[RMDB]
RNA sequence: GGGAACGACUCGAGUAGAGUCGAAAACGUGGCGUGAAUGUUAAUUUCUCAGCGGAAGGAGGUAAAACCGCACUUAGCGCAGCGGUUGAAGCUGGGGAUGUGUAUAGUGCAAUAUUCCUCAUGGAGACCUACGGUAAUGAUUCGUCAUUACCGUAGGAAAAGAAACAACAACAACAAC
Reactivity to 2A3 in 0.01 (KOAc 150mM, MgCl2 10mM, bicine 150mM(pH8.5), 24C), signal-to-noise 5, nucleotides 027 to 126: c030g030u050g040g000c040g040u110g060a100a050u090g040u100u120a050a040u040u090u010c020u000c030a020g020c020g050g060a070a060g090g050a020g000g070u090a050a060a040a020c010c000g000c010a030c040u050u130a040g040c040g000c130a040g010c010g000g000u030u030g010a040a010g000c010u000g000g000g020g010a030u030g050u000g020u030a050u060a240g110u100g060c010a010a020u030a090u110u060c000c010u040c020a080u090g070g030a080g040a050
Reactivity to DMS in 0.01 (KOAc 150mM, MgCl2 10mM, bicine 150mM(pH8.5), 24C), signal-to-noise 8, nucleotides 027 to 126: c080g040u000g010g020c080g020u020g010a080a060u010g010u000u000a090a090u010u000u000c010u000c020a050g020c040g010g010a120a090g000g010a050g010g010u010a070a050a040a040c030c010g010c010a110c090u010u000a120g010c100g020c130a130g010c010g010g010u000u000g000a120a120g010c030u000g000g010g010g010a020u000g010u000g010u000a090u010a070g020u000g000c050a050a060u010a120u000u000c010c010u000c070a100u000g000g000a160g010a190

The data come from the RNA Mapping Database (RMDB), library OK2TST. Structure probing data (2A3 and DMS) for a 177-nucleotide construct. In probing experiments dimethyl sulfate is read out at A N1 and C N3, which are open when not base-paired. The DMS profile rests on 13,037 reads.